Conditions: 150 mM KOAc, 10 mM MgCl2 and 150 mM bicine (pH 8.5), 24 C. Structure probing data (DMS and 2A3) for a 177-nucleotide construct.

RNA sequence: GGGAACGACUCGAGUAGAGUCGAAAAUGAUUUAAUUUUUUAUUGAUAAUUGGAUUAGUAACUAGGCGAAUAGAUGAAAUGCAGAAAAAGAAAUGGUACACCCGAGUGGACUCGAACCACCGACCCCAAUAAGAGGGUAAUUCGUUACCCUCUUAUUAAAAGAAACAACAACAACAAC
Reactivity to DMS in 0.01 (KOAc 150mM, MgCl2 10mM, bicine 150mM(pH8.5), 24C), signal-to-noise 5, nucleotides 027 to 126: u030g000a080u010u010u010a020a010u000u020u020u020u010u050a120u070u030g000a090u010a040a030u000u000g010g000a050u010u010a050g000u000a080a070c040u000a060g010g010c080g000a070a050u020a070g010a070u000g000a030a070a060u000g000c030a070g010a060a030a060a060a090g000a050a050a030u020g000g010u010a050c080a070c070c060c020g000a070g010u010g010g000a040c030u010c100g000a070a090c060c020a040c030c050g000a090c030c010c010c070
Reactivity to 2A3 in 0.01 (KOAc 150mM, MgCl2 10mM, bicine 150mM(pH8.5), 24C), signal-to-noise 3, nucleotides 027 to 126: u030g030a000u010u030u220a070a040u070u050u040u010u110u260a170u150u110g010a020u030a300a070u080u040g020g030a030u040u010a100g080u040a050a030c020u020a040g080g000c030g010a050a020u030a070g060a060u070g050a130a070a000u100g030c030a010g140a070a060a010a050a000g110a030a100a030u080g020g000u020a010c030a030c000c070c010g010a040g000u050g030g040a080c020u020c150g030a060a020c010c010a010c000c000g010a060c000c000c010c000